Structure probing data (DMS and 2A3) for a 177-nucleotide construct. The reactions ran in a buffer of 150 mM KOAc, 10 mM MgCl2 and 150 mM bicine (pH 8.5), at 24 C. Reactivities are given for positions 27 through 126. Source: RMDB library OK1LIB, as collected in RNAgym. For 2A3, 22,060 sequencing reads were counted.
RNA sequence: GGGAACGACUCGAGUAGAGUCGAAAAGUGACUGAGAAACAGUCGCCACGAGCGGCGAUUUACCGGAGUGAGUAUGAGCUAGCAGGAAGUAAGACGAUAACGGUGAUCGGUUCGAACUCAUAGGACGAGAAUCAUACAAUUUCGAUUGUAUGAUUCUAAAAGAAACAACAACAACAAC
Reactivity to DMS in 0.01 (KOAc 150mM, MgCl2 10mM, bicine 150mM(pH8.5), 24C), signal-to-noise 9, nucleotides 027 to 126: g010u030g000a050c020u000g010a190g000a130a120a120c050a030g000u000c000g000c010c040a080c110g000a080g010c040g000g010c030g000a040u010u010u010a050c030c020g010g010a110g010u010g000a120g020u010a040u030g010a000g020c040u010a070g020c070a060g000g010a050a050g010u000a070a090g010a060c050g010a090u040a070a100c050g010g010u000g000a060u010c020g000g000u000u000c030g000a050a090c040u000c040a090u030a080g000g000a090c170g000
Reactivity to 2A3 in 0.01 (KOAc 150mM, MgCl2 10mM, bicine 150mM(pH8.5), 24C), signal-to-noise 7, nucleotides 027 to 126: g060u050g020a020c010u020g020a020g140a140a140a020c020a010g000u000c000g010c000c020a100c060g070a050g020c040g040g010c020g030a030u030u030u130a030c000c000g000g010a070g030u080g010a020g010u060a050u070g030a010g020c020u020a020g000c020a010g000g040a050a010g020u110a050a000g050a020c010g010a040u040a080a030c020g000g000u010g010a030u020c000g000g000u010u010c010g010a020a010c000u000c020a020u030a040g020g020a010c030g020